[RMDB]
RNA sequence: GGGAACGACUCGAGUAGAGUCGAAAAAAACAUCGUCGCCGAGUAUGCUGCGUAGACUUUUAGCUACAUCCUCGCCGUAAAUCUUCCACGGACCAACGCCAAUACCAUUUUUGACGACUUCGGAAACUGUAAUACCACCAAACCAAGAUACGGAUGGUACUAUCCCUCGUUUCGACGAGGGAUAGUAAAAAGAAACAACAACAACAAC
Reactivity to 2A3 in 0.01 (KOAc 150mM, MgCl2 10mM, bicine 150mM(pH8.5), 24C), signal-to-noise 1, nucleotides 027 to 156: a000a000a000c040a040u100c020g050u010c010g000c050c040g030a010g050u060a000u080g000c010u000g060c100g080u040a060g060a200c010u080u030u000u100a030g010c040u040a060c000a070u000c000c010u030c010g020c020c000g050u030a000a040a060u060c010u080u000c070c000a050c030g050g000a030c010c010a020a020c030g030c000c000a060a080u130a150c040c070a100u150u040u000u000u030g070a040c130g020a040c030u070u020c020g030g070a030a020a000c030u020g060u060a100a000u030a110c000c030a000c000c020a000a090a050c040c010a060a000g000a060u030a050c040g030g020a060u010g030g010
Reactivity to DMS in 0.01 (KOAc 150mM, MgCl2 10mM, bicine 150mM(pH8.5), 24C), signal-to-noise 1, nucleotides 027 to 156: a110a070a040c050a060u000c030g020u000c020g050c040c020g050a100g000u020a040u020g000c010u000g040c050g040u000a110g020a220c100u000u000u000u000a180g050c000u010a070c020a020u010c050c000u000c040g000c020c000g020u020a020a030a020u000c100u110u000c030c050a110c070g000g020a140c020c000a020a060c000g020c000c000a030a080u000a060c060c030a210u000u010u010u000u000g000a150c010g000a160c100u050u000c020g000g020a080a020a120c070u010g010u000a100a080u000a080c000c000a060c000c000a040a050a170c020c040a090a090g100a080u000a070c040g000g000a280u020g000g040